[RMDB]
RNA sequence: GGGAACGACUCGAGUAGAGUCGAAAAUGCGCUUUGGACAAUGGCAAGAGUUGCAAGGCAAUGAAUGGCAUAUUCCAGCCGAACGCAUGAAGAUGAACCGUCCGCACAUUGUGCCGCUAUCCGAUUGGGUUUUCAGUUACUUCGGUAACUGAAAACCAAAAGAAACAACAACAACAAC
Reactivity to 2A3 in 0.01 (KOAc 150mM, MgCl2 10mM, bicine 150mM(pH8.5), 24C), signal-to-noise 1, nucleotides 027 to 126: u020g000c030g080c090u100u030u080g040g000a030c050a090a100u020g000g150c010a010a020g010a010g110u020u050g070c110a150a090g280g020c020a000a050u040g060a040a040u050g000g070c040a040u030a160u230u000c000c010a040g030c120c030g000a040a000c010g000c010a020u060g060a020a010g020a110u160g040a080a070c040c000g010u040c000c050g010c020a010c010a050u110u270g010u070g040c030c010g050c010u040a060u160c050c020g090a090u030u190g040
Reactivity to DMS in 0.01 (KOAc 150mM, MgCl2 10mM, bicine 150mM(pH8.5), 24C), signal-to-noise 1, nucleotides 027 to 126: u000g010c050g000c130u000u000u000g000g030a050c180a080a080u020g000g020c030a050a030g000a300g010u000u000g030c050a030a130g060g000c050a090a000u000g000a210a130u000g010g010c040a020u010a160u000u000c010c080a190g000c170c030g000a070a030c090g040c040a050u010g010a030a180g050a060u010g010a090a220c070c040g000u000c040c060g000c120a100c080a220u000u010g000u020g010c030c030g010c110u020a050u030c020c020g000a160u000u000g020